[RMDB]
RNA sequence: GGGAACGACUCGAGUAGAGUCGAAAAAUCCAUGACUAAAAAAAGCAAAAAAGUAAUAAUUGGGUGUUGUGUUCUCACAAAGAAAGAUGGAAAAGUUUAACAAAAACUUGUGAAGGAAGAUGAAUGCUAACUUAUGAUGUUUCGACAUCAUAAGUUAAAAAGAAACAACAACAACAAC
Reactivity to DMS in 0.01 (KOAc 150mM, MgCl2 10mM, bicine 150mM(pH8.5), 24C), signal-to-noise 5, nucleotides 027 to 126: a070u010c010c000a080u040g000a100c080u050a000a010a060a070a120a160a120g020c050a010a050a080a080a080a080g010u020a050a080u030a070a090u010u010g010g000g000u000g010u000u000g040u010g000u000u000c040u000c020a040c090a040a070a070g010a060a060a070g000a060u000g000g000a070a060a040a030g010u010u010u010a050a120c150a100a060a040a030a010c020u000u010g010u010g020a050a070g010g000a040a050g020a050u020g010a070a040u020g000c140
Reactivity to 2A3 in 0.01 (KOAc 150mM, MgCl2 10mM, bicine 150mM(pH8.5), 24C), signal-to-noise 2, nucleotides 027 to 126: a000u020c000c000a040u020g060a060c090u160a040a070a220a040a000a030a030g100c010a000a080a020a040a130a090g160u130a010a210u100a150a040u190u090g010g070g030u050g000u060u100g000u000g040u070u000c030u000c000a040c000a000a120a030g110a030a010a020g020a080u160g040g020a070a130a000a030g030u120u060u050a020a030c070a080a070a000a000a000c000u010u030g000u040g040a030a020g050g020a000a000g010a010u110g050a050a050u070g040c000

An RNA of 177 nucleotides, treated with DMS and 2A3 and read out base by base. The RNA was probed in 150 mM KOAc, 10 mM MgCl2 and 150 mM bicine (pH 8.5) at 24 C. DMS adducts were read by reverse transcription with MarathonRT.